Structure probing data (DMS and 2A3) for a 177-nucleotide construct. For 2A3 the reverse transcriptase was SuperScript II with manganese. The RNA was probed in 150 mM KOAc, 10 mM MgCl2 and 150 mM bicine (pH 8.5) at 24 C.
RNA sequence: GGGAACGACUCGAGUAGAGUCGAAAACCCAGAGCGGCUUGCCGGACCUUUGCGCGCAGCCGCUCUGACUAUUUGUUUUUACACAUUCCGACCAAUUGCCGAGGACGCUCCCGAAAACGAAGACCCGUUACUUAGCUGAAUUCGUUCAGCUAAGUAAAAAAGAAACAACAACAACAAC
Reactivity to DMS in 0.01 (KOAc 150mM, MgCl2 10mM, bicine 150mM(pH8.5), 24C), signal-to-noise 5, nucleotides 027 to 126: c130c040c000a030g000a030g020c000g010g040c000u020u030g040c020c030g000g020a130c250c180u020u040u010g010c030g010c200g010c020a020g010c010c000g010c000u000c010u000g000a100c140u010a110u010u010u010g020u000u010u010u020u000a090c130a090c110a110u000u000c090c010g000a100c070c050a070a090u010u010g010c050c010g000a080g000g020a110c060g010c020u030c010c010c000g020a030a030a090a120c140g000a060a080g020a120c010c020c020g020
Reactivity to 2A3 in 0.01 (KOAc 150mM, MgCl2 10mM, bicine 150mM(pH8.5), 24C), signal-to-noise 9, nucleotides 027 to 126: c000c000c000a000g000a000g000c010g040g000c070u160u280g040c030c020g100g110a280c030c090u170u210u300g050c040g000c000g000c000a000g000c000c000g000c000u000c000u000g000a000c000u070a130u070u080u070g080u010u040u010u060u130a060c080a020c030a080u100u070c030c030g030a040c020c040a100a090u140u130g010c010c000g020a020g030g050a070c010g000c010u010c000c000c000g020a050a080a010a010c050g030a050a010g030a050c000c000c010g010